[RMDB]
RNA sequence: GGGAACGACUCGAGUAGAGUCGAAAAGAAAAACAGUUUUGUGGUCACUUCCCCUUUCCUCUCUCUGCAGUCAAAUGUGUGCUUUACCUCUGGACAGUAGGGAGGGUGUUGGGAGAAGAUGUUGACUGAUACAUAUCUGUAUACUAACAUCUUUAAGGCGUCAUUAUCAGUUCGCUGAUAAUGACGCAAAAGAAACAACAACAACAAC
Reactivity to 2A3 in 0.01 (KOAc 150mM, MgCl2 10mM, bicine 150mM(pH8.5), 24C), signal-to-noise 2, nucleotides 027 to 156: g040a010a150a040a010a000c040a010g000u160u100u060u080g060u020g030g000u000c000a010c010u000u000c010c000c000c000u000u100u030c000c000u000c000u000c000u000c010u010g000c000a010g000u010c000a080a200a160u150g080u030g000u070g130c060u230u190u190a040c010c000u060c010u010g000g030a000c000a000g010u020a000g000g010g000a000g010g000g010u160g010u000u020g010g000g020a190g000a040a010g010a080u110g130u150u080g020a010c020u010g020a020u070a180c020a000u060a040u020c060u030g040u030a060u100a160c050u050a110a070c020a110u010c000u000u090u080a170a060g200